This 177-nucleotide RNA was probed chemically with 2A3 and DMS. The RNA was probed in 150 mM KOAc, 10 mM MgCl2 and 150 mM bicine (pH 8.5) at 24 C. Reactivities are rounded to 0.1 and cut off at 0 and 3. 2A3 adducts were read by reverse transcription with SuperScript II with manganese. DMS (dimethyl sulfate) methylates the pairing face of unpaired adenines and cytosines.
RNA sequence: GGGAACGACUCGAGUAGAGUCGAAAAGAGCUUUUUUUCGAAAAAGCUCCGGCGCAAUGCCUAUGUGUACACUUCACAAGGGUUUGUGGUGGUCAAUCGCAAUACCAGCAAUCUUCGGAUUGCUGAACUAGUCGUGGUAUUUCGAUACCACGACUAGAAAAGAAACAACAACAACAAC
Reactivity to 2A3 in 0.01 (KOAc 150mM, MgCl2 10mM, bicine 150mM(pH8.5), 24C), signal-to-noise 1, nucleotides 027 to 126: g000a010g010c000u000u030u000u000u000u040u110c060g030a050a000a040a000a000g000c000u000c010c040g050g040c030g000c090a120a020u200g030c010c010u060a210u090g010u000g000u010a090c210a120c220u050u050c020a000c010a040a160g030g000g110u010u130u070g050u080g040g190u090g000g000u130c060a020a060u090c060g000c080a090a140u090a210c050c000a010g000c010a000a010u010c000u050u060c140g100g000a000u000u000g010c010u000g000a000a030
Reactivity to DMS in 0.01 (KOAc 150mM, MgCl2 10mM, bicine 150mM(pH8.5), 24C), signal-to-noise 2, nucleotides 027 to 126: g000a030g000c000u000u000u000u000u000u040u020c110g020a020a000a000a010a010g000c000u000c000c040g040g030c020g040c060a080a030u000g020c010c010u000a150u000g020u010g000u000a110c230a090c220u000u000c020a020c010a060a300g000g000g010u010u000u000g000u000g000g020u000g030g030u010c110a070a080u000c080g040c110a070a050u020a040c160c010a020g000c000a000a010u000c000u020u010c140g020g000a010u000u000g010c010u000g010a020a130